[RMDB]
RNA sequence: GGGAACGACUCGAGUAGAGUCGAAAACGUUGGUCAAUGCGAUCGGAGCGAAUGCGGGAACGGUGUACCUGACGCGCGACGCUCUCAAUGCCGAUUUGAACCGUACUGAAAAUACGAUGGCAUGGGUAGUCCAGGACCCGACCGUCGCCUACAACGGCCCAUUUACAACUUUCGAGUUGUAAAUGGGAAAAGAAACAACAACAACAAC
Reactivity to DMS in 0.01 (KOAc 150mM, MgCl2 10mM, bicine 150mM(pH8.5), 24C), signal-to-noise 2, nucleotides 027 to 156: c060g000u010u000g010g020u000c040a090a140u000g000c000g040a100u020c060g000g060a120g000c010g010a070a150u010g030c070g020g000g010a050a050c070g020g010u000g030u000a110c020c040u000g020a200c140g010c050g030c020g020a140c030g030c000u010c020u000c050a090a090u010g020c040c010g000a200u000u000u000g020a110a060c020c000g040u000a020c020u010g000a130a130a110a260u000a040c000g020a030u000g010g060c000a040u020g040g020g040u020a100g020u010c090c100a110g000g010a100c020c010c010g000a050c000c010g030u000c040g000c040c030u000a090c020a050a080c040g000g010
Reactivity to 2A3 in 0.01 (KOAc 150mM, MgCl2 10mM, bicine 150mM(pH8.5), 24C), signal-to-noise 5, nucleotides 027 to 156: c040g000u040u030g060g030u080c120a170a120u150g050c070g080a110u080c090g040g030a100g030c040g040a100a120u230g050c040g020g000g050a100a090c040g010g000u120g020u160a300c000c010u030g030a030c040g060c030g040c120g140a010c020g010c040u000c000u010c030a040a060u040g010c000c020g060a140u110u070u180g080a070a050c060c000g010u020a020c050u120g050a090a020a050a070u060a020c030g030a080u090g000g000c000a010u040g000g010g020u070a230g020u080c040c020a010g020g030a020c000c000c010g030a050c030c000g030u060c010g010c010c010u080a080c030a050a030c000g030g000
About this RNA: Chemical mapping of a 207-nucleotide RNA with DMS and 2A3. The data come from the RNA Mapping Database (RMDB), library OK3TST. The DMS profile rests on 4,035 reads. DMS adducts were read by reverse transcription with MarathonRT. The reactions ran in a buffer of 150 mM KOAc, 10 mM MgCl2 and 150 mM bicine (pH 8.5), at 24 C.